[RMDB]
RNA sequence: GGGAACGACUCGAGUAGAGUCGAAAAGAUAGGACAGAGAAAUCACCUCCAGAGGACCCCUUCAGCGAACAUGAAGCGCACUGAGCCGCCAGGAUGAGUCCAUAGCGAUAGGAGGGGAUGCUAGGAGAAAGAGGCAAGUUCGCUUGCCUCAAAAGAAACAACAACAACAAC
Reactivity to 2A3 in 0.01 (KOAc 150mM, MgCl2 10mM, bicine 150mM(pH8.5), 24C), signal-to-noise 7, nucleotides 027 to 129: g050a050u180a030g020g020a030c060a030g060a030g070a070a050a050u100c040a020c010c000u000c000c020a030g010a050g060g040a080c000c000c010c010u020u020c030a030g010c000g040a030a050c040a070u140g100a080a010g020c020g010c020a050c080u090g040a010g060c040c030g010c020c020a020g060g020a060u090g030a030g070u030c040c000a030u070a020g060c050g070a020u060a060g010g000a010g000g010g000g000a000u040g060c020u020a020g000g040a010g050a020a080a030
Reactivity to DMS in 0.01 (KOAc 150mM, MgCl2 10mM, bicine 150mM(pH8.5), 24C), signal-to-noise 6, nucleotides 027 to 129: g000a050u090a010g000g000a030c110a000g000a050g020a000a000a000u030c040a100c070c030u000c040c050a060g000a140g050g000a100c040c030c040c020u010u060c100a000g020c000g020a030a020c110a080u030g030a050a060g020c190g050c120a090c080u000g000a110g070c100c060g040c080c080a060g020g080a100u040g020a050g040u030c050c020a080u050a140g000c100g050a070u050a080g000g040a050g010g000g010g000a050u000g000c080u000a050g050g030a060g000a080a150a060
Chemical mapping of a 170-nucleotide RNA with 2A3 and DMS.
The 2A3 profile rests on 14,610 reads.
The reactions ran in a buffer of 150 mM KOAc, 10 mM MgCl2 and 150 mM bicine (pH 8.5), at 24 C.
The DMS profile rests on 16,455 reads.